[RMDB]
RNA sequence: GGGAACGACUCGAGUAGAGUCGAAAAAGCCGAGUCAGAGACUCGGCGAAGAGUGCAAGAGCAUAAGAUAGGCUGACAGUGUCCUACACAACGAGGGACGCUGACGCGAAAGCGUGGUCUAGCGAACCAUUGUGUUGUAUUUCGAUACAACACAAUGAAAAGAAACAACAACAACAAC
Reactivity to 2A3 in 0.01 (KOAc 150mM, MgCl2 10mM, bicine 150mM(pH8.5), 24C), signal-to-noise 9, nucleotides 027 to 126: a000g000c000c000g000a000g010u010c120a080g080a010g000a300c000u000c000g000g000c000g000a020a010g060a020g030u110g000c050a130a090g030a060g110c020a050u060a150a050g050a110u050a030g030g010c020u030g040a050c000a010g010u000g000u000c000c010u130a050c100a010c020a170a210c140g090a220g010g010g010a000c000g000c000u000g000a000c000g000c010g040a120a020a000g000c020g010u040g010g000u010c010u010a020g030c020g040a020a020c020
Reactivity to DMS in 0.01 (KOAc 150mM, MgCl2 10mM, bicine 150mM(pH8.5), 24C), signal-to-noise 9, nucleotides 027 to 126: a170g010c010c000g010a010g010u000c010a260g020a260g000a030c000u000c000g010g010c000g010a020a040g010a120g020u000g010c070a100a090g010a130g010c050a050u010a090a100g010a090u010a020g000g000c000u000g010a150c010a020g010u000g010u000c000c010u000a130c140a120c270a060a110c270g010a300g000g000g000a020c000g020c000u000g000a070c020g000c000g000a100a080a110g000c000g020u000g010g010u000c010u000a020g000c050g010a130a100c180